RNA sequence: GGGAACGACUCGAGUAGAGUCGAAAACAGUUGGUCUCCUUUGAUUGGCCAAAAUGUGGUGAUUAGCACAAGAGUAGGUUACAGUCUGCUUAUGCCUCCAUUUAGGUAACAGUUCAUGAUUUUCAGAGAAAGCUUUAGGCUGGACUUAAAAUAUGUAUCAAGCAUUAGUAUUCGUACUAAUGCUUGAAAAAGAAACAACAACAACAAC
Reactivity to 2A3 in 0.01 (KOAc 150mM, MgCl2 10mM, bicine 150mM(pH8.5), 24C), signal-to-noise 7, nucleotides 027 to 156: c030a030g020u040u040g030g020u020c030u090c060c060u090u060u100g100a110u040u090g040g000c020c020a030a020a020a080u110g010u050g020g020u100g040a110u060u130a020g000c020a020c050a150a050g020a020g080u090a030g020g110u090u140a070c030a050g030u020c020u040g010c000u040u050a050u130g020c000c010u040c050c010a060u050u090u090a050g010g010u060a110a050c010a050g030u080u090c020a020u040g160a090u030u050u050u050c030a010g060a010g060a120a030a010g010c020u140u180u140a130g100g000c000u020g010g000a000c000u020u040a000a030a000a010u160a030u130g040u120a080
Reactivity to DMS in 0.01 (KOAc 150mM, MgCl2 10mM, bicine 150mM(pH8.5), 24C), signal-to-noise 5, nucleotides 027 to 156: c040a110g000u000u000g010g010u000c050u000c040c040u000u000u010g020a130u000u000g020g030c020c040a060a050a070a090u000g030u000g020g020u010g020a130u000u000a110g000c030a080c060a060a120g020a090g020u000a050g040g020u000u000a250c100a120g020u010c010u000g000c030u000u000a070u000g010c020c010u000c040c060a130u000u000u010a070g030g020u000a050a100c050a070g010u000u010c060a070u000g000a110u000u000u000u010c070a300g010a160g010a130a090a080g000c030u000u000u010a080g030g020c040u000g010g000a090c040u000u000a020a040a070a110u000a050u010g000u000a210